Background: The record gives the reactivity of an RNA of 177 nucleotides to 2A3 and DMS. For DMS the reverse transcriptase was MarathonRT. The reactions ran in a buffer of 150 mM KOAc, 10 mM MgCl2 and 150 mM bicine (pH 8.5), at 24 C.

[RMDB]
RNA sequence: GGGAACGACUCGAGUAGAGUCGAAAAGAAAGAAAGAAAGUGAUGGUCAUGCACAGUUCUGGGAGAUGUUAUCACGUGCUAUCUCAUUCGGUGAUAUCGUCACCCAGCACCGCACAUGCACAUCAAACACAAACCAGUUCUUCGGAACUGGUUUGUGAAAAGAAACAACAACAACAAC
Reactivity to 2A3 in 0.01 (KOAc 150mM, MgCl2 10mM, bicine 150mM(pH8.5), 24C), signal-to-noise 5, nucleotides 027 to 126: g080a000a020a010g130a040a100a010g140a100a050a020g060u050g020a010u020g020g070u040c010a000u010g000c060a020c010a050g000u010u000c000u000g000g010g000a030g000a000u020g010u050u010a000u000c020a010c020g010u080g030c070u150a260u190c120u040c090a170u300u070c050g160g000u020g000a000u000a000u020c000g000u010c010a050c010c000c000a010g000c000a000c000c000g000c000a010c000a020u010g020c050a020c000a010u010c000a010a080a000
Reactivity to DMS in 0.01 (KOAc 150mM, MgCl2 10mM, bicine 150mM(pH8.5), 24C), signal-to-noise 2, nucleotides 027 to 126: g030a060a020a060g010a170a050a060g020a080a120a050g020u000g000a020u000g000g020u000c050a000u000g020c130a300c300a040g000u000u000c000u020g000g000g020a030g050a000u000g000u000u000a000u000c000a000c000g000u050g000c210u070a090u010c210u000c110a120u010u010c010g000g000u000g000a030u000a000u000c000g010u000c000a050c000c000c030a040g010c070a010c000c050g020c250a300c020a000u000g000c180a030c010a000u030c000a090a120a210